[RMDB]
Structure probing data (DMS and 2A3) for a 177-nucleotide construct.
It was measured as part of the RMDB library M2PK90.
As a SHAPE reagent, 2A3 marks flexible, mostly unpaired nucleotides at the ribose 2'-OH.
Values are in units of 0.01, from 0 to 300, in steps of 10.
For DMS the reverse transcriptase was MarathonRT.
For DMS, 3,742 sequencing reads were counted.
The reactions ran in a buffer of 150 mM KOAc, 10 mM MgCl2 and 150 mM bicine (pH 8.5), at 24 C.
RNA sequence: GGGAACGACUCGAGUAGAGUCGAAAAUAACAUCGUAGUGUAAGACGAAAAGUCAACGUCGCUUGCCAGCAGGACCACCAAAGGAAUACGCUUCGGUAACUUCUCGAGAUCCCAAGCGAUAACACAAUUGAUAAUCCAAGUUCGCUUGGAUUAUCAAAAAAGAAACAACAACAACAAC
Reactivity to DMS in 0.01 (KOAc 150mM, MgCl2 10mM, bicine 150mM(pH8.5), 24C), signal-to-noise 4, nucleotides 027 to 126: u010a080a140c100a070u010c040g030u000a050g020u020g020u010a080a120g010a040c010g000a060a070a090a100g000u000c060a100a070c130g010u000c040g010c040u000u010g020c040c050a060g000c100a070g000g000a050c070c100a040c050c070a040a070a060g000g010a100a080u000a070c120g010c070u010u000c040g000g020u000a070a060c040u000u000c010u000c040g000a090g010a110u000c010c020c000a050a060g000c050g000a040u000a060a040c130a070c160a040a080
Reactivity to 2A3 in 0.01 (KOAc 150mM, MgCl2 10mM, bicine 150mM(pH8.5), 24C), signal-to-noise 1, nucleotides 027 to 126: u040a000a020c030a040u060c040g040u020a100g040u000g040u110a040a110g030a010c010g010a050a040a180a110g030u010c030a000a040c060g050u030c000g020c050u000u060g050c000c020a040g040c020a010g060g010a030c040c010a010c010c030a020a110a060g070g030a080a050u070a050c040g030c040u000u010c000g050g000u050a100a080c020u080u000c000u020c020g000a010g020a040u010c010c010c010a010a010g060c080g080a040u050a160a020c060a010c040a060a080